This 177-nucleotide RNA was probed chemically with 2A3 and DMS. For DMS, 981 sequencing reads were counted. Values cover nucleotides 27 to 126. The reactions ran in a buffer of 150 mM KOAc, 10 mM MgCl2 and 150 mM bicine (pH 8.5), at 24 C.
RNA sequence: GGGAACGACUCGAGUAGAGUCGAAAACCUGAAUUAUGGAACGUCAUUGACAUUUUUUAUUCAACGAAGAGUUAACCACUCUUAAUAAUAAUGGGUUUUAUAGCGAAAUAGACUUUUUUAUCGCGUGCUACUUAGUCCAGUUCGCUGGACUAAGUAGAAAAGAAACAACAACAACAAC
Reactivity to 2A3 in 0.01 (KOAc 150mM, MgCl2 10mM, bicine 150mM(pH8.5), 24C), signal-to-noise 2, nucleotides 027 to 126: c000c000u000g060a030a040u180u030a030u150g030g060a100a030c050g050u010c100a230u030u210g020a010c000a010u020u010u030u000u110u170a090u070u060c040a070a040c080g080a040a000g000a000g020u030u060a020a010c010c000a000c020u000c010u040u100a100a140u170a180a000u090a050a070u160g050g000g000u000u030u060u150a130u030a050g010c050g000a000a000a020u090a060g160a140c000u180u150u100u010u110u120a140u070c010g000c000g040u030g010
Reactivity to DMS in 0.01 (KOAc 150mM, MgCl2 10mM, bicine 150mM(pH8.5), 24C), signal-to-noise 1, nucleotides 027 to 126: c020c000u020g020a060a040u000u000a000u000g000g010a030a040c080g010u010c040a190u010u000g010a000c040a010u000u000u000u000u010u000a020u010u010c060a050a130c290g010a020a000g000a000g000u010u020a070a060c140c100a240c000u010c000u010u000a070a130u030a030a020u010a050a070u010g010g000g000u000u000u000u000a020u010a080g010c010g000a030a070a030u000a090g010a140c140u010u060u010u000u000u000a100u010c020g010c060g060u000g020